[RMDB]
RNA sequence: GGGAACGACUCGAGUAGAGUCGAAAACGAAGUCGCCCAUGACCGCGACGGCGUCACCGUCCGUGCCGGCGGCUCGGCGAUGGAGUACGCCCAGAUCAAUCGGCAGAACAAAGACGACCUGCUGGUGCAGGUCGCGCAGGUUCGCCUGCGCGACCUGAAAAGAAACAACAACAACAAC
Reactivity to 2A3 in 0.01 (KOAc 150mM, MgCl2 10mM, bicine 150mM(pH8.5), 24C), signal-to-noise 3, nucleotides 027 to 126: c000g000a010a000g010u000c000g010c020c030c010a080u140g110a130c010c000g020c010g040a020c000g000g010c010g080u160c090a130c190c050g170u180c020c010g030u110g300c080c020g280g000c010g000g000c010u010c030g000g000c010g000a010u020g000g000a000g000u010a050c080g040c010c010c000a030g070a170u170c080a080a040u040c010g010g000c010a010g030a150a090c060a200a200a030g240a160c110g050a080c020c000u000g000c000u020g040g000u060g000
Reactivity to DMS in 0.01 (KOAc 150mM, MgCl2 10mM, bicine 150mM(pH8.5), 24C), signal-to-noise 4, nucleotides 027 to 126: c010g010a300a220g010u000c000g000c010c000c190a060u000g000a090c030c020g000c030g000a020c010g000g010c040g020u000c230a150c210c050g000u020c030c000g000u000g030c120c010g000g020c050g010g020c010u000c280g010g030c040g010a020u010g000g010a300g000u010a110c190g000c010c010c020a140g000a050u010c100a080a070u000c030g000g000c000a050g020a090a120c120a040a100a080g030a160c170g000a050c070c000u000g010c010u000g020g010u010g000
An RNA of 177 nucleotides, treated with 2A3 and DMS and read out base by base. For DMS the reverse transcriptase was MarathonRT. Values cover nucleotides 27 to 126.